The record gives the reactivity of an RNA of 177 nucleotides to DMS.
The RNA was probed in 150 mM KOAc, 10 mM MgCl2 and 150 mM bicine (pH 8.5) at 24 C.
For DMS, 2,037 sequencing reads were counted.
DMS adducts were read by reverse transcription with MarathonRT.
[RMDB]
RNA sequence: GGGAACGACUCGAGUAGAGUCGAAAAGAUAUGGACUAUUUGCGUCGUGGUCUACUACCCACCUCUCCGGUGUCGGAAACGACACGCCUGAGAGAGGUAGAGCCACGACGCAAAUAGUCCUAAGUCACAUUUGUUUGAACUUCGGUUCAAACAAAUGAAAAGAAACAACAACAACAAC
Reactivity to DMS in 0.01 (KOAc 150mM, MgCl2 10mM, bicine 150mM(pH8.5), 24C), signal-to-noise 2, nucleotides 027 to 126: g010a060u010a300u010g000g010a020c000u000a010u010u000u020g000c010g030u000c000g040u000g000g010u030c030u020a090c010u010a010c010c010c050a210c230c010u000c000u000c140c170g000g010u000g010u000c000g010g000a110a140a210c000g000a040c000a050c070g000c300c050u020g010a030g000a010g010a040g000g010u000a010g020a120g000c020c000a010c000g010a010c020g000c010a000a000a000u000a000g000u000c000c010u000a000a040g010u000c070a300
It was measured as part of the RMDB library TTRINS.